[RMDB]
An RNA of 207 nucleotides, treated with 2A3 and DMS and read out base by base. The data come from the RNA Mapping Database (RMDB), library M2RFPK. The DMS profile rests on 2,564 reads. The RNA was probed in 150 mM KOAc, 10 mM MgCl2 and 150 mM bicine (pH 8.5) at 24 C. For DMS the reverse transcriptase was MarathonRT.
RNA sequence: GGGAACGACUCGAGUAGAGUCGAAAAGGGACGCCUUUAGAAGAAGAGGCUAGGUGGUAUUCCGGUGUGGGAUACUUGGUAAUAUGUAACGCUAAUUGCAUAAGAUUGUAGGACGGCAUUUACAGUCAAAACGGUCCUGCGUUCGCGCAGGACCGAAUCUUUAUCUUAUCUUCGGAUAAGAUAAAGAAAAAGAAACAACAACAACAAC
Reactivity to 2A3 in 0.01 (KOAc 150mM, MgCl2 10mM, bicine 150mM(pH8.5), 24C), signal-to-noise 3, nucleotides 027 to 156: g030g000g020a030c050g010c010c020u090u050u090a210g020a230a000g030a040a000g010a040g010g040c020u030a030g020g050u060g010g000u050a060u050u060c040c040g030g110u190g020u140g070g010g000a030u040a060c020u030u060g040g000u050a080a070u030a080u120g030u040a050a010c060g010c110u070a130a040u100u050g000c010a020u040a160a060g050a070u070u100g020u040a040g000g060a040c050g000g010c000a000u070u050u050a030c030a040g050u030c030a000a010a030a090c000g000g000u030c000c020u010g000c000g000u010u060c150g010c000g000c080a000g000g000a010c000c000g000a000a000
Reactivity to DMS in 0.01 (KOAc 150mM, MgCl2 10mM, bicine 150mM(pH8.5), 24C), signal-to-noise 1, nucleotides 027 to 156: g000g000g010a160c060g030c020c060u000u000u000a130g010a120a090g000a130a120g020a080g020g010c040u000a070g030g030u000g020g030u030a060u000u000c040c040g050g030u000g020u000g020g000g030a030u000a020c020u000u000g020g000u000a100a060u000a030u000g010u010a040a070c080g000c080u020a060a120u000u000g010c030a060u010a110a140g000a090u010u010g010u000a080g010g000a110c020g010g030c000a290u000u020u020a050c040a050g010u010c040a020a060a080a140c020g050g040u000c000c040u040g000c010g010u000u020c280g050c050g000c000a030g000g030a000c000c020g000a020a030